[RMDB]
RNA sequence: GGGAACGACUCGAGUAGAGUCGAAAAGCCCCACGCUUCGGCGUGGGGCAAAUAAAAUCAGCGGUAAGCUGGCGUAAAAUAUUACCGCUGAACGCCUGCUUAAAACACCCUUGUUCGCAAGGGUGAAGACUAUGGUUACGUUCGCGUAACCAUAGUCAAAAGAAACAACAACAACAAC
Reactivity to DMS in 0.01 (KOAc 150mM, MgCl2 10mM, bicine 150mM(pH8.5), 24C), signal-to-noise 1, nucleotides 027 to 126: g000c000c000c010c000a000c000g030c000u000u000c220g060g010c000g090u000g000g080g040g030c010a010a000a030u020a090a040a110a090u000c010a010g020c020g000g040u000a020a020g020c180u000g000g020c160g000u000a050a030a180a100u020a070u000u010a020c000c020g030c010u030g000a000a080c180g000c000c000u000g010c190u000u000a080a090a110a280c000a000c000c000c000u000u000g000u000u000c120g010c010a010a050g000g000g030u000g020a000a040
Reactivity to 2A3 in 0.01 (KOAc 150mM, MgCl2 10mM, bicine 150mM(pH8.5), 24C), signal-to-noise 1, nucleotides 027 to 126: g000c000c050c020c040a000c000g020c040u040u070c270g110g000c050g000u020g010g050g110g050c000a000a010a010u030a010a020a010a090u010c000a000g000c000g000g000u010a010a010g020c070u080g180g010c110g070u100a140a130a120a010u230a060u030u010a000c030c000g000c000u000g000a010a010c010g010c000c000u050g030c090u180u180a050a170a020a000c020a000c000c000c000u000u010g060u140u120c280g010c070a000a000g000g000g010u000g010a000a020